This 177-nucleotide RNA was probed chemically with 2A3 and DMS. The 2A3 profile rests on 1,638 reads. The RNA was probed in 150 mM KOAc, 10 mM MgCl2 and 150 mM bicine (pH 8.5) at 24 C. It was measured as part of the RMDB library M2PK50. DMS adducts were read by reverse transcription with MarathonRT. 2A3 adducts were read by reverse transcription with SuperScript II with manganese.
RNA sequence: GGGAACGACUCGAGUAGAGUCGAAAAAGCUCCUGUUUCGACAGGAGCUGUGUGGCUGCCCUUUUGUGCUCGAUGUAGACUGCUUUCCUGCCGGAAAGGGCUUGAGAGCUUGAUUCGUCAAGCUCAAUCUACCCACACUUUUCGAAGUGUGGGUAGAAAAAGAAACAACAACAACAAC
Reactivity to 2A3 in 0.01 (KOAc 150mM, MgCl2 10mM, bicine 150mM(pH8.5), 24C), signal-to-noise 1, nucleotides 027 to 126: a000g000c000u010c000c000u010g020u000u090u020c190g080a000c010a010g020g000a000g010c010u000g000u030g000u030g040g050c030u030g020c010c060c000u030u050u020u050g090u070g000c000u010c030g110a100u220g020u060a050g060a120c040u070g040c000u220u010u000c000c000u010g030c020c030g010g020a030a020a000g010g010g010c000u050u090g150a090g010a000g000c000u000u010g030a020u030u080c210g020u020c120a000a000g010c000u000c000a010a020
Reactivity to DMS in 0.01 (KOAc 150mM, MgCl2 10mM, bicine 150mM(pH8.5), 24C), signal-to-noise 3, nucleotides 027 to 126: a020g010c000u000c000c000u000g010u000u000u010c170g010a030c010a010g010g000a000g020c000u000g000u000g020u010g010g020c040u000g010c010c010c030u010u000u000u020g000u010g010c020u000c060g000a090u010g030u010a060g000a110c120u020g000c070u000u000u000c010c010u000g010c040c040g030g000a030a070a040g020g010g010c040u000u010g010a170g000a010g010c000u000u010g000a050u000u010c150g000u000c000a010a000g010c010u000c010a050a070